This 177-nucleotide RNA was probed chemically with DMS and 2A3.
Source: RMDB libraries RFM100 and RFMREP, as collected in RNAgym.
Conditions: 150 mM KOAc, 10 mM MgCl2 and 150 mM bicine (pH 8.5), 24 C.
Values cover nucleotides 27 to 126.

RNA sequence: GGGAACGACUCGAGUAGAGUCGAAAAGGGGUCUUCUUCUUCUCUCACACAUUGUGCUGAUGUGAUUCUCAUGACUCUUGCUUGGAGAGAUCUGGACGAGGAGUUGGGGGAACCUCUGACCUUGCCCCUUCUAGCAUCAGUUCGCUGAUGCUAGAAGAAAAGAAACAACAACAACAAC
Reactivity to DMS in 0.01 (KOAc 150mM, MgCl2 10mM, bicine 150mM(pH8.5), 24C), signal-to-noise 7, nucleotides 027 to 126: g010g010g000g010u000c040u000u000c000u000u010c010u000u010c010u020c010u000c100a300c010a020c020a030u010u020g030u030g010c190u030g000a050u000g010u000g010a140u030u010c080u030c050a040u030g000a040c010u000c000u000u010g010c210u020u030g010g000a030g020a030g000a110u000c000u000g010g010a120c300g000a050g000g000a010g010u010u010g010g000g000g000g000a040a050c010c000u000c000u000g000a090c130c100u000u010g000c020c000c010
Reactivity to 2A3 in 0.01 (KOAc 150mM, MgCl2 10mM, bicine 150mM(pH8.5), 24C), signal-to-noise 9, nucleotides 027 to 126: g010g000g000g000u010c030u010u010c000u030u000c000u010u000c010u010c000u030c010a030c000a010c010a050u060u100g170u220g220c180u210g030a090u010g030u000g070a150u190u020c100u030c040a060u220g020a040c010u000c000u020u050g180c170u110u210g120g010a020g010a030g020a240u010c010u030g030g030a040c060g010a040g030g010a010g010u040u040g020g000g000g010g010a040a050c000c000u000c000u010g020a030c010c000u020u090g080c000c000c000